[RMDB]
RNA sequence: GGGAACGACUCGAGUAGAGUCGAAAAGAUGCGGUCAGCGUGUUUGCGCUGCCGACGAUGCCGCCGCUGCACAUCGCGCUGUUGCGCGAGCUGUCGCGCUGGAUCGACGUGCGCAUCUACGCGCUCAUGCCUCCUGGAUCUUCGGAUCCAGGAGGCAAAAAGAAACAACAACAACAAC
Reactivity to DMS in 0.01 (KOAc 150mM, MgCl2 10mM, bicine 150mM(pH8.5), 24C), signal-to-noise 2, nucleotides 027 to 126: g000a040u010g020c070g000g040u010c050a040g000c000g030u000g030u040u000u000g010c030g000c000u000g030c220c010g000a050c000g020a090u000g000c050c030g000c300c050g020c080u000g000c020a260c150a240u000c010g020c010g000c000u010g000u010u030g010c000g050c010g020a000g000c300u000g010u000c260g030c040g010c000u000g030g000a070u000c010g030a100c040g010u020g000c010g000c030a010u000c060u030a080c140g020c050g030c010u000c100a090
Reactivity to 2A3 in 0.01 (KOAc 150mM, MgCl2 10mM, bicine 150mM(pH8.5), 24C), signal-to-noise 1, nucleotides 027 to 126: g040a030u060g000c000g050g060u130c040a000g000c010g000u020g020u090u130u280g000c000g030c000u020g070c080c010g010a000c010g000a000u050g250c000c010g010c000c010g000c020u050g000c020a010c010a150u000c000g010c000g000c030u180g110u300u300g000c000g000c010g000a000g000c050u050g040u070c020g000c000g000c020u070g000g000a030u000c000g030a020c000g060u160g030c000g000c020a000u000c010u030a020c070g050c000g020c010u030c080a110
The data come from the RNA Mapping Database (RMDB), library OK2TRN. Chemical mapping of a 177-nucleotide RNA with DMS and 2A3. The RNA was probed in 150 mM KOAc, 10 mM MgCl2 and 150 mM bicine (pH 8.5) at 24 C. 2A3 adducts were read by reverse transcription with SuperScript II with manganese. For DMS the reverse transcriptase was MarathonRT. Values cover nucleotides 27 to 126. For DMS, 1,012 sequencing reads were counted.